[RMDB]
Structure probing data (2A3) for a 207-nucleotide construct.
RNA sequence: GGGAACGACUCGAGUAGAGUCGAAAAGUUGAGAGCGUUUAACUUAAGUCUUUUUUAUUAGCCUAAAAAAACUAUAUACAAGUGGUGGUAGUCCGCCACUCUAAGGGGACGCCUUUAGAAGAAGAGGGAAAGGCACUAAGCUUCGGCUUAGUGCCAAGAAACUGAUAGUGUUCGCACUAUCAGUUUCAAAAGAAACAACAACAACAAC
Reactivity to 2A3 in 0.01 (KOAc 150mM, MgCl2 10mM, bicine 150mM(pH8.5), 24C), signal-to-noise 1, nucleotides 027 to 156: g050u060u070g030a010g000a050g060c000g010u060u110u090a110a100c040u100u000a100a020g020u110c040u110u090u010u040u010u010a060u170u090a140g040c010c000u150a110a090a010a040a080a060a060c080u120a050u040a060u050a250c090a100a050g000u000g000g010u000g000g020u110a040g050u030c000c010g000c020c000a020c000u010c000u000a000a040g000g000g000g030a010c030g020c030c020u030u060u110a040g000a110a000g050a030a000g000a030g020g080g010a000a070a130g070g040c030a000c010u000a030a000g050c000u030u090c130g000g000c000u000u000a000g000u000g000c010c000a000a000
Conditions: 150 mM KOAc, 10 mM MgCl2 and 150 mM bicine (pH 8.5), 24 C.